[RMDB]
RNA sequence: GGGAACGACUCGAGUAGAGUCGAAAAAAGUACCACCUCAAAAUCAUCAAUGGUCUAUACAAUUAUCAGAGCUCGAAACUUUAACGGGUGAAUUUCGCUAUUGGUCUGCGAUGGGGCAUCAUAUGUAUGUAGAUCCUGGGUUCGCCCAGGAUCUACAAAAAGAAACAACAACAACAAC
Reactivity to 2A3 in 0.01 (KOAc 150mM, MgCl2 10mM, bicine 150mM(pH8.5), 24C), signal-to-noise 1, nucleotides 027 to 126: a000a000g050u050a000c000c000a090c030c000u000c000a000a000a000a270u010c020a000u050c000a000a150u080g110g060u000c080u110a090u010a200c020a040a140u260u240a000u150c100a000g040a020g110c000u000c000g060a130a000a000c140u300u260u140a000a090c000g000g030g000u000g000a000a050u000u000u030c020g000c000u000a000u130u250g000g000u010c020u080g000c010g010a040u050g000g000g000g000c050a070u070c140a000u130a060u070g120u080a040